[RMDB]
RNA sequence: GGGAACGACUCGAGUAGAGUCGAAAAGGGAGCUGCCAGCCCGUCCAAGCGUCGAAGCCCCCGGAGAUCCGUAAUGGAGAGAAGGGGGUGAAGGCGUGAUGGCGUAAGCCGGCCGACUCCUGGGGCCAUUAGAAAAAGUUUUCGAACUUUUUCUAAUAAAAGAAACAACAACAACAAC
Reactivity to DMS in 0.01 (KOAc 150mM, MgCl2 10mM, bicine 150mM(pH8.5), 24C), signal-to-noise 6, nucleotides 027 to 126: g010g010g010a030g020c020u010g000c010c010a050g020c000c030c020g000u030c010c020a070a300g000c000g010u000c000g000a220a300g000c000c000c000c000c010g000g000a300g000a040u000c000c000g020u030a130a070u070g000g000a000g000a020g020a300a180g000g000g000g000g010u000g000a100a300g000g000c000g000u000g010a210u010g000g000c020g000u010a130a080g010c000c040g000g000c000c040g000a110c000u000c000c000u000g000g010g020g030c030c020
Reactivity to 2A3 in 0.01 (KOAc 150mM, MgCl2 10mM, bicine 150mM(pH8.5), 24C), signal-to-noise 4, nucleotides 027 to 126: g000g010g000a000g000c010u000g010c000c010a010g010c010c030c000g020u060c010c000a050a020g000c000g010u020c010g090a070a010g000c000c000c000c000c000g010g000a080g030a070u000c000c010g050u160a130a200u300g010g000a030g020a020g020a050a050g000g000g000g000g000u010g000a000a000g010g000c000g000u000g010a070u250g000g000c000g000u020a010a020g000c000c000g010g000c010c010g200a300c000u000c000c000u010g030g000g080g030c010c010
This 177-nucleotide RNA was probed chemically with DMS and 2A3. DMS adducts were read by reverse transcription with MarathonRT. Reactivities are given for positions 27 through 126. The 2A3 profile rests on 4,363 reads. Reactivities are rounded to 0.1 and cut off at 0 and 3. The reactions ran in a buffer of 150 mM KOAc, 10 mM MgCl2 and 150 mM bicine (pH 8.5), at 24 C.